[RMDB]
RNA sequence: GGGAACGACUCGAGUAGAGUCGAAAAGCUCGGAGACGAGCAAGGCUGACAAAACUGUGUCCCAACCUCCACGUGGUGUCGGCUGGAUAAUGCUGCAUUAUGUUGCAUUUAUCAACUGGGAAAGAAAGCUAGGGUAAAUGUUCGCAUUUACCCUAGCAAAAGAAACAACAACAACAAC
Reactivity to 2A3 in 0.01 (KOAc 150mM, MgCl2 10mM, bicine 150mM(pH8.5), 24C), signal-to-noise 9, nucleotides 027 to 126: g010c000u000c000g030g030a120g020a050c010g000a000g000c010a000a060g030g000c010u010g000a010c010a010a080a060a070c050u060g030u030g050u120c000c010c000a010a030c010c010u060c020c020a100c100g070u140g020g000u010g000u010c000g010g000c020u010g030g000a010u020a030a010u020g010c020u010g010c010a060u100u110a140u300g030u010u030g000c020a010u050u080u060a030u020c000a000a030c040u040g010g010g000a070a080a020g100a020a070a010
Reactivity to DMS in 0.01 (KOAc 150mM, MgCl2 10mM, bicine 150mM(pH8.5), 24C), signal-to-noise 3, nucleotides 027 to 126: g000c020u010c020g000g010a240g000a210c010g010a030g030c010a110a070g010g000c010u010g000a040c050a050a130a090a070c080u010g010u020g010u000c020c000c000a150a050c050c030u000c030c030a110c190g000u010g010g000u000g010u010c000g010g030c010u000g020g000a020u000a000a000u000g010c050u000g000c010a160u050u010a080u030g030u000u000g000c000a000u010u030u020a000u010c000a060a060c070u000g000g000g000a060a020a030g010a110a140a120
Chemical mapping of a 177-nucleotide RNA with 2A3 and DMS. The 2A3 profile rests on 12,230 reads. Reactivities are given for positions 27 through 126. The RNA was probed in 150 mM KOAc, 10 mM MgCl2 and 150 mM bicine (pH 8.5) at 24 C.